[RMDB]
About this RNA:
An RNA of 177 nucleotides, treated with 2A3 and DMS and read out base by base.

RNA sequence: GGGAACGACUCGAGUAGAGUCGAAAAUCCAUAAAUGCGUCUGUUACAGUUUUGGAAGAUCAAUAUUACUCGCCUUUUACUCUUCUUUCGUUUUGAAGGAAAUAUGAGUGAAAUCAGAAGGACAAUCCAUACAGUGGGUAUUCGUACCCACUGUAUGAAAAGAAACAACAACAACAAC
Reactivity to 2A3 in 0.01 (KOAc 150mM, MgCl2 10mM, bicine 150mM(pH8.5), 24C), signal-to-noise 8, nucleotides 027 to 126: u000c010c000a060u190a050a130a040u150g030c050g030u000c060u080g170u140u100a090c040a120g040u020u070u200u170g130g020a080a030g020a120u060c050a100a060u080a090u210u140a050c040u040c080g080c010c000u010u080u010u050a010c010u000c000u020u020c010u010u020u020c040g170u120u060u150u300g040a050a010g050g100a040a010a020u240a090u150g020a020g000u020g020a030a020a040u110c030a040g090a170a020g070g000a010c030a030a030u030c030
Reactivity to DMS in 0.01 (KOAc 150mM, MgCl2 10mM, bicine 150mM(pH8.5), 24C), signal-to-noise 8, nucleotides 027 to 126: u010c010c000a110u030a060a090a080u020g000c090g000u010c050u010g010u010u000a110c090a120g010u010u010u010u000g000g010a060a070g000a120u010c080a060a080u010a080u010u020a100c060u010c050g020c110c070u000u000u000u000a030c010u000c020u000u000c010u010u010u000c010g010u010u020u040u030g010a020a010g000g000a020a050a100u020a080u020g000a010g010u000g000a020a030a060u040c160a100g010a080a060g000g000a090c160a060a090u010c110
Overview:
The data come from the RNA Mapping Database (RMDB), libraries RFM100 and RFMREP. The RNA was probed in 150 mM KOAc, 10 mM MgCl2 and 150 mM bicine (pH 8.5) at 24 C.